RNA sequence: GGGAACGACUCGAGUAGAGUCGAAAAGAUAUGGAAGUUCGGUGGAUGCUUGGAUUUAUAGUCGGAAACGACUAUUGUCAGCAUCUUGCCGAGACUUCCUAAGUCAAAGAAAGGGUUCGCCCUUUCAGCCCCUAUAUCACUUCGGUGAUAUAGGGGCAAAAGAAACAACAACAACAAC
Reactivity to DMS in 0.01 (KOAc 150mM, MgCl2 10mM, bicine 150mM(pH8.5), 24C), signal-to-noise 1, nucleotides 027 to 126: g010a030u020a300u010g020g020a020a010g000u000u020c010g000g050u010g020g000a030u010g010c030u010u020g010g010a010u040u010u010a000u000a000g010u000c030g010g020a160a100a250c000g000a010c000u000a000u000u000g000u000c000a060g010c010a030u010c020u000u040g060c000c010g000a050g010a030c000u000u000c000c010u010a010a160g010u000c060a170a180a140g000a010a000a000g000g000g020u000u000c300g000c060c000c000u000u000u000c020a170
Reactivity to 2A3 in 0.01 (KOAc 150mM, MgCl2 10mM, bicine 150mM(pH8.5), 24C), signal-to-noise 1, nucleotides 027 to 126: g010a030u150a090u260g010g010a000a030g000u020u030c010g020g080u030g000g030a000u000g030c110u200u290g240g020a030u130u300u040a030u070a020g000u010c000g020g050a120a110a030c060g000a000c000u000a000u000u000g010u020c010a000g000c030a000u050c010u010u090g040c030c010g020a010g000a000c000u020u040c000c000u010a010a020g020u060c100a200a040a160g000a020a010a020g080g000g050u040u100c300g250c030c020c170u000u000u020c000a000